[RMDB]
RNA sequence: GGGAACGACUCGAGUAGAGUCGAAAAUGCAUAUCGCCGCUUACAGAAGCGUGGAUUUUCACAUACCAAUCGGAAGUGUCUGUGCAAAUCUAUCGCAACUGUACACGGCGAUACUGCAGUUAUUGAACAUCCCAACACGGUUCGCCGUGUUGGGAUGAAAAGAAACAACAACAACAAC
Reactivity to 2A3 in 0.01 (KOAc 150mM, MgCl2 10mM, bicine 150mM(pH8.5), 24C), signal-to-noise 1, nucleotides 027 to 126: u010g000c020a000u010a020u000c000g000c000c000g000c010u000u040a010c000a010g010a000a010g010c000g010u000g000g010a010u000u010u000u010c010a040c000a000u010a000c010c020a050a160u230c220g160g180a090a120g100u080g010u140c020u030g010u000g000c000a000a010a010u040c010u010a060u200c030g020c000a010a010c000u000g010u010a010c010a020c070g000g000c000g010a000u000a000c000u010g020c000a020g010u050u050a140u110u120g040a110a020
Reactivity to DMS in 0.01 (KOAc 150mM, MgCl2 10mM, bicine 150mM(pH8.5), 24C), signal-to-noise 2, nucleotides 027 to 126: u000g050c000a050u000a010u000c030g010c010c000g000c060u000u010a010c020a030g010a010a300g000c000g010u000g030g020a050u000u000u000u000c020a020c010a010u010a010c000c040a220a170u000c210g060g030a150a110g010u000g000u000c040u000g000u000g000c070a000a000a010u010c010u000a010u010c000g020c030a030a180c000u000g020u000a000c120a040c000g000g000c010g000a010u000a000c220u000g010c000a020g030u020u000a080u000u010g010a100a140